Overview
Chemical mapping of a 177-nucleotide RNA with DMS and 2A3. Reactivities are given for positions 27 through 126. For 2A3, 3,038 sequencing reads were counted. 2A3 adducts were read by reverse transcription with SuperScript II with manganese. Conditions: 150 mM KOAc, 10 mM MgCl2 and 150 mM bicine (pH 8.5), 24 C. The DMS profile rests on 1,415 reads. DMS adducts were read by reverse transcription with MarathonRT.
RNA sequence: GGGAACGACUCGAGUAGAGUCGAAAAGAUAUGGACCCAUCGAUCAGGAACUACCAGGCCGUGUCGGAAACGACACGGGUCCUGGCCUGGGAGGGUCCUAAGUCAAAGUGCCACCUUCGGGUGGCACCCCAUUAGGCGUGUUCGCACGCCUAAUGGGAAAAGAAACAACAACAACAAC
Reactivity to DMS in 0.01 (KOAc 150mM, MgCl2 10mM, bicine 150mM(pH8.5), 24C), signal-to-noise 2, nucleotides 027 to 126: g030a090u000a300u000g010g000a000c000c000c000a200u000c190g040a110u000c000a010g010g020a080a040c110u000a300c030c010a020g010g020c000c000g020u000g010u000c000g010g030a090a060a290c000g010a000c000a010c000g030g010g000u000c000c000u000g040g030c000c000u000g000g000g000a060g030g050g010u040c000c000u000a000a050g010u010c050a100a100a160g020u000g000c020c000a030c000c010u000u040c290g040g000g050u010g020g000c000a000c010
Reactivity to 2A3 in 0.01 (KOAc 150mM, MgCl2 10mM, bicine 150mM(pH8.5), 24C), signal-to-noise 2, nucleotides 027 to 126: g060a000u080a020u170g050g010a000c040c020c020a300u300c030g140a170u100c000a010g000g000a090a120c130u210a110c300c030a010g000g000c030c000g000u000g010u010c010g030g000a070a050a040c010g010a000c010a000c040g000g000g010u050c000c000u000g010g000c030c010u010g000g030g010a050g000g000g000u010c000c000u000a100a030g060u060c070a190a080a180g010u010g000c030c010a010c010c000u080u100c300g140g000g000u000g010g070c000a010c050